[RMDB]
RNA sequence: GGGAACGACUCGAGUAGAGUCGAAAAGAUAUGGAGCCCGAGGGAGAAGUAUUCGGAAACGAAUAUACUUCGAAGAACUCGAGGCUCCUAAGUCAAACUGCCGGAAGUAGUUCGCUACUUCCGGCAGCUUUGGUUACAGGUUCGCCUGUAACCAAAGAAAAGAAACAACAACAACAAC
Reactivity to DMS in 0.01 (KOAc 150mM, MgCl2 10mM, bicine 150mM(pH8.5), 24C), signal-to-noise 1, nucleotides 027 to 126: g010a020u000a030u010g000g000a030g040c000c000c010g000a010g050g000g030a030g000a020a030g000u000a000u000u000c000g050g010a000a000a000c000g000a060a020u000a060u000a180c030u000u000c000g000a130a240g000a240a280c000u010c000g000a090g030g020c000u000c000c000u000a000a110g010u000c000a090a170a300c020u000g020c030c010g020g020a040a000g020u000a010g010u000u020c240g030c010u000a000c000u000u000c030c030g000g020c000a000g000
Source: RMDB library TTRDES, as collected in RNAgym. This 177-nucleotide RNA was probed chemically with DMS. Conditions: 150 mM KOAc, 10 mM MgCl2 and 150 mM bicine (pH 8.5), 24 C.